[RMDB]
RNA sequence: GGGAACGACUCGAGUAGAGUCGAAAAGAUAUGGAAUCCGAACUACGCUGUAAGACUGGUGGGAGAGGAGGAUCGGAAACGAUCCUCUACCCACCUCCCACCAGUUUGAGGCGCGGAUUCCUAAGUCCUUAGGAAUGAGCUUCGGCUCAUUCCUAAGAAAAGAAACAACAACAACAAC
Reactivity to DMS in 0.01 (KOAc 150mM, MgCl2 10mM, bicine 150mM(pH8.5), 24C), signal-to-noise 1, nucleotides 027 to 126: g020a050u010a180u000g000g000a070a030u000c000c020g000a110a060c150u010a300c060g030c000u000g010u030a300a060g000a020c000u000g030g010u000g000g000g000a030g010a090g000g000a000g000g010a000u000c010g050g000a040a130a160c000g090a000u000c000c050u000c010u000a010c020c030c050a300c140c000u010c000c000c000a040c010c000a000g000u000u010u000g000a140g000g000c000g010c060g000g000a000u000u000c000c000u010a000a100g000u000c030